Structure probing data (DMS and 2A3) for a 177-nucleotide construct. Conditions: 150 mM KOAc, 10 mM MgCl2 and 150 mM bicine (pH 8.5), 24 C.
[RMDB]
RNA sequence: GGGAACGACUCGAGUAGAGUCGAAAAGAUAUGGACCUAGAACUACAACCAAACUUGCGAUGAAAUCGGAAACGAUGGAGCAAGCUAGGUUGCUAGGUCCUAAGUCAAACAAGGCUUCGGCCUUGAAGAUCAAAGUGUUGUUCGCAACACUUUGAUCAAAAGAAACAACAACAACAAC
Reactivity to DMS in 0.01 (KOAc 150mM, MgCl2 10mM, bicine 150mM(pH8.5), 24C), signal-to-noise 3, nucleotides 027 to 126: g010a060u000a300u000g020g000a000c000c000u010a010g020a140a050c100u010a300c010a000a000c000c000a040a130a170c010u000u000g010c000g000a120u000g040a050a110a030u000c010g000g020a100a070a170c000g000a000u000g000g010a080g000c010a000a000g010c020u000a260g000g000u000u000g030c000u000a000g010g010u000c000c000u000a020a060g000u000c030a100a090a180c030a000a020g010g010c000u000u000c200g020g010c000c000u000u000g010a100a130
Reactivity to 2A3 in 0.01 (KOAc 150mM, MgCl2 10mM, bicine 150mM(pH8.5), 24C), signal-to-noise 4, nucleotides 027 to 126: g030a000u050a050u140g010g010a000c000c000u020a020g000a100a100c190u300a050c200a010a010c020c000a000a070a040c010u010u000g010c020g300a300u030g010a050a030a000u030c000g000g020a040a030a040c000g000a000u010g000g010a020g020c000a000a000g010c010u030a020g000g000u000u000g000c000u000a000g010g000u000c010c000u000a010a000g000u000c000a010a030a080c000a000a000g020g000c020u080u190c300g180g000c020c010u000u000g010a020a030
It was measured as part of the RMDB library TTRDEL.